[RMDB]
RNA sequence: GGGAACGACUCGAGUAGAGUCGAAAAACGAUGUAUCAAUUAUAACUGAAUUAAUUUCAGCUUAUAUUCAAGGUAAUAAAAAUCAACUUCACAACCAAGUUGAUCAAAUCACAUUGAAUGGAACAAGUAAUGUUGCUCAAAGUUUACUAGGUGCGGGCCUGACUAUUAGAUUCGUCUAAUAGUCAGGAAAAGAAACAACAACAACAAC
Reactivity to DMS in 0.01 (KOAc 150mM, MgCl2 10mM, bicine 150mM(pH8.5), 24C), signal-to-noise 2, nucleotides 027 to 156: a080c080g010a110u020g010u000a110u000c060a180a150u000u000a110u000a050a030c010u000g010a020a020u000u010a080a160u010u000u000c000a020g000c020u000u000a110u000a030u010u000c000a020a030g020g010u000a030a050u020a000a100a100a050a000u000c000a000a010c010u000u000c040a230c110a070a210c210c070a040a030g020u010u020g000a010u000c000a180a200a070u010c020a020c010a070u000u020g000a050a040u000g010g020a070a040c060a020a120g010u000a060a100u000g000u000u000g000c010u000c050a070a080a170g000u000u000u000a060c020u000a060g020g030u000g010c040g000g000g030
Reactivity to 2A3 in 0.01 (KOAc 150mM, MgCl2 10mM, bicine 150mM(pH8.5), 24C), signal-to-noise 6, nucleotides 027 to 156: a000c060g010a030u070g020u090a080u130c050a030a060u170u050a060u080a100a020c000u000g030a030a030u050u200a140a140u090u120u020c010a000g000c020u110u060a030u020a010u080u070c040a050a050g020g000u060a070a070u070a120a190a030a000a000u020c000a000a000c000u080u050c130a070c030a300a150c110c050a030a010g000u000u010g010a000u010c040a000a080a060u100c010a010c030a110u030u110g030a040a030u060g030g030a060a030c030a090a000g060u110a040a130u130g030u070u050g020c020u030c110a070a090a070g010u050u090u070a090c020u050a040g020g060u090g060c070g050g030g030